[RMDB]
Chemical mapping of a 177-nucleotide RNA with 2A3. Reactivities are given for positions 27 through 126. The reactions ran in a buffer of 150 mM KOAc, 10 mM MgCl2 and 150 mM bicine (pH 8.5), at 24 C.
RNA sequence: GGGAACGACUCGAGUAGAGUCGAAAAGGAGUCCACAUAAGUCAGUGGUGGUGGGAGCCCCUGUUGGGGGCGCUAUACCACAGCCGUUGAUGAGCAUGGCCGUUCUUAGGUGUAAGCCCUGCCGGUUCUCAAUUCGACUCUUCGGAGUCGAAUUGAGAAAAGAAACAACAACAACAAC
Reactivity to 2A3 in 0.01 (KOAc 150mM, MgCl2 10mM, bicine 150mM(pH8.5), 24C), signal-to-noise 1, nucleotides 027 to 126: g070g020a020g000u030c020c020a080c020a120u140a010a060g000u010c010a040g000u020g050g000u000g000g020u010g000g040g030a010g000c000c000c000c000u070g170u270u300g070g060g000g000g000c010g000c000u080a070u050a150c030c000a020c000a000g000c000c000g000u000u010g020a030u040g020a020g010c170a050u030g040g000c010c000g060u060u000c010u010u020a090g040g000u020g010u060a160a070g010c000c000c000u030g010c020c000g090g050u070u000
Background: Source: RMDB library RFM100, as collected in RNAgym. 2A3 adducts were read by reverse transcription with SuperScript II with manganese.